Overview: This 207-nucleotide RNA was probed chemically with 2A3. Source: RMDB library M2RFPK, as collected in RNAgym. The RNA was probed in 150 mM KOAc, 10 mM MgCl2 and 150 mM bicine (pH 8.5) at 24 C. Values cover nucleotides 27 to 156. For 2A3, 642 sequencing reads were counted.
RNA sequence: GGGAACGACUCGAGUAGAGUCGAAAAGAACUUUGGCCGGCUAGGAAUAGAAUCAGGGGGUGCAAACUGCCCACUGGCAGAAAGGAUUAUAGCAAAUGCGUACCCUAUUGCAAUACAGCCCGGCCAACAUAGACUACUCUAUUCGUAGAGUAGUCAACAGCAUUGUUCGAUUCGUCGAACAAUGCUGAAAAGAAACAACAACAACAAC
Reactivity to 2A3 in 0.01 (KOAc 150mM, MgCl2 10mM, bicine 150mM(pH8.5), 24C), signal-to-noise 1, nucleotides 027 to 156: g060a030a020c000u010u110u010g000g000c000c000g000g030c010u040a010g050g080a120a100u070a070g040a040a060u140c000a120g000g000g000g000g150u050g000c010a010a080a080c040u010g000c000c050c040a100c120u030g000g000c000a010g070a020a020a010g030g100a110u110u120a080u230a190g010c020a030a060a030u060g020c010g010u070a060c020c000c010u020a050u110u050g040c010a020a130u030a210c030a030g040c000c020c030g000g000c000c000a000a000c010a000u090a000g000a000c000u000a000c000u030c000u000a040u040u100c090g080u050a020g000a000g000u010a000g000u000c000a000a020